[RMDB]
The record gives the reactivity of an RNA of 207 nucleotides to DMS. It was measured as part of the RMDB library OK3TST. DMS adducts were read by reverse transcription with MarathonRT. Conditions: 150 mM KOAc, 10 mM MgCl2 and 150 mM bicine (pH 8.5), 24 C. For DMS, 5,462 sequencing reads were counted.

RNA sequence: GGGAACGACUCGAGUAGAGUCGAAAAUAUUCAAAGCGAACAUUGUAAUAUUGACCCUGAUGCAAAGAUGGCCGUAUUAAGGCUUUCCAAAGGAGAUAUGAGGAAAGCACUGAAUAUACUCCAGGCGUGCCAUGCUGCCUACGAUCAUAUUGAUGUAGAUACCUCAUAGUUUCGACUAUGAGGUAUCAAAAGAAACAACAACAACAAC
Reactivity to DMS in 0.01 (KOAc 150mM, MgCl2 10mM, bicine 150mM(pH8.5), 24C), signal-to-noise 3, nucleotides 027 to 156: u000a030u010u000c030a110a080a150g000c070g010a090a110c080a250u000u000g010u000a040a050u010a020u000u010g020a160c020c000c010u000g010a170u000g030c070a060a090a130g020a120u000g010g010c010c030g020u000a050u010u000a060a090g020g000c010u000u000u000c010c020a030a160a190g030g020a300g010a120u000a040u010g020a300g010g000a020a030a040g010c040a060c040u000g010a050a030u000a110u000a060c070u010c040c020a080g040g020c090g010u000g000c020c020a090u000g040c060u010g030c020c050u020a100c040g020a070u000c020a050u000a140u000u010g010a050u010g030u000a180